Source: RMDB library OK2TST, as collected in RNAgym. Chemical mapping of a 177-nucleotide RNA with 2A3 and DMS. For DMS the reverse transcriptase was MarathonRT. For DMS, 9,566 sequencing reads were counted. The RNA was probed in 150 mM KOAc, 10 mM MgCl2 and 150 mM bicine (pH 8.5) at 24 C. For 2A3, 1,799 sequencing reads were counted. Values cover nucleotides 27 to 126.

[RMDB]
RNA sequence: GGGAACGACUCGAGUAGAGUCGAAAAAAUCGACAUACUGAAUUCGGCUGUCGUAUUUUGAGCCGGACGGGAUUUUGGUUGCCCAGGAGGGCGAGGCCAGCGUGAUCAGUAUGCACGCAAGCAGGAACUAAUGGCUAGGAUUCGUCCUAGCCAUUAGAAAAGAAACAACAACAACAAC
Reactivity to 2A3 in 0.01 (KOAc 150mM, MgCl2 10mM, bicine 150mM(pH8.5), 24C), signal-to-noise 2, nucleotides 027 to 126: a000a020u050c010g030a000c020a000u020a010c000u060g000a080a070u120u060c000g020g000c000u040g120u230c090g010u120a300u040u220u110u190g040a010g000c040c000g000g050a020c030g070g020g020a040u060u040u110u170g100g010u090u120g000c030c010c010a010g110g170a160g030g020g010c030g040a120g040g040c030c050a020g000c000g020u010g000a000u020c000a030g050u020a040u050g000c020a010c010g000c000a000a060g060c020a030g050g090a040a050
Reactivity to DMS in 0.01 (KOAc 150mM, MgCl2 10mM, bicine 150mM(pH8.5), 24C), signal-to-noise 7, nucleotides 027 to 126: a030a030u000c020g020a270c010a010u000a030c010u000g010a080a260u000u000c020g010g010c040u000g010u000c120g010u010a090u010u000u010u010g010a100g030c010c000g010g020a080c190g000g010g010a070u000u000u000u000g020g010u000u010g010c010c000c010a180g020g010a230g010g020g020c090g010a100g010g000c020c040a160g010c010g010u000g000a110u000c020a030g010u000a010u000g010c020a040c030g000c060a070a090g010c090a120g010g010a100a170